Structure probing data (2A3) for a 207-nucleotide construct.
For 2A3, 1,082 sequencing reads were counted.
Values cover nucleotides 27 to 156.
[RMDB]
RNA sequence: GGGAACGACUCGAGUAGAGUCGAAAAGCACGGUUCGCCGUGCACGAUAUCCUAAGUCACGGAACUAUUCGAAGGGAGUCCGUAUCGGAAACGAUACCGGGACGAAGAACUUCGAACGAAUUCCGUGAUAUGGACUGGAUGAUCCUUCGGGAUCAAAGAUCACUGAUUCCUUCGGGAAUCAGUGAUCAAAAGAAACAACAACAACAAC
Reactivity to 2A3 in 0.01 (KOAc 150mM, MgCl2 10mM, bicine 150mM(pH8.5), 24C), signal-to-noise 1, nucleotides 027 to 156: g000c000a010c000g000g030u060u230c300g060c130c000g000u010g060c010a000c000g030a060u180a030u090c030c000u040a100a020g000u000c000a000c000g000g010a000a000c040u030a060u020u000c000g010a000a020g040g000g020a010g000u040c000c000g000u010a000u000c010g010g010a070a040a010c010g000a000u010a040c040c110g200g010g020a000c010g030a050a050g000a040a010c000u000u000c010g020a020a000c010g070a070a270u000u000c000c000g010u000g000a000u000a010u050g010g010a010c030u060g100g140a200u070g000a010u020c010c000u040u160c260g090g000g000a000u000c000a010a050a020
Source: RMDB library RNAMAK, as collected in RNAgym. For 2A3 the reverse transcriptase was SuperScript II with manganese.